Structure probing data (DMS and 2A3) for a 207-nucleotide construct. DMS adducts were read by reverse transcription with MarathonRT. Source: RMDB library OK3TST, as collected in RNAgym. For DMS, 3,247 sequencing reads were counted. Conditions: 150 mM KOAc, 10 mM MgCl2 and 150 mM bicine (pH 8.5), 24 C. For 2A3 the reverse transcriptase was SuperScript II with manganese.
RNA sequence: GGGAACGACUCGAGUAGAGUCGAAAAAUGUUAAUUGAGAAGGUAAGACCCUUUUUAUCAGGGAUAGACAAUCUAGUAUGGACGCAACAGUCACUGUCAAAGAAGCUCAAUCCGUUGGUCCGCAGACAGUCACGAUUACUAUGCAGUCACCCCCAGCGAAGACAUGCUAUUUCGAUAGCAUGUCUUCAAAAGAAACAACAACAACAAC
Reactivity to DMS in 0.01 (KOAc 150mM, MgCl2 10mM, bicine 150mM(pH8.5), 24C), signal-to-noise 2, nucleotides 027 to 156: a060u000g050u010u000a050a120u000u010g000a080g000a100a060g000g010u010a040a140g030a200c040c020c000u000u000u020u010u000a170u030c120a130g040g000g040a140u000a080g000a130c040a040a070u000c060u010a110g040u000a090u000g040g000a080c070g000c040a060a090c100a150g000u000c060a100c040u000g020u000c000a100a080a110g000a100a080g020c040u000c030a060a090u000c060c060g020u000u000g050g010u000c030c010g010c060a190g000a060c010a110g020u000c060a060c100g010a070u010u000a050c050u000a110u010g000c050a040g010u030c050a060c000c000c000c000c000a140g000c180
Reactivity to 2A3 in 0.01 (KOAc 150mM, MgCl2 10mM, bicine 150mM(pH8.5), 24C), signal-to-noise 2, nucleotides 027 to 156: a000u110g030u060u020a130a050u240u110g080a060g040a070a030g030g000u110a030a080g040a060c020c000c000u010u080u030u090u060a150u150c050a020g060g010g050a110u050a050g020a000c040a030a110u040c060u020a030g050u020a100u140g090g010a000c030g050c160a110a040c020a090g020u050c010a010c100u020g020u030c050a020a080a150g060a080a020g030c020u020c080a030a100u040c060c070g000u020u110g050g030u020c020c010g000c010a010g010a020c000a040g040u050c020a000c050g040a010u010u070a070c030u030a020u190g070c050a030g040u010c000a040c010c030c010c020c020a000g030c010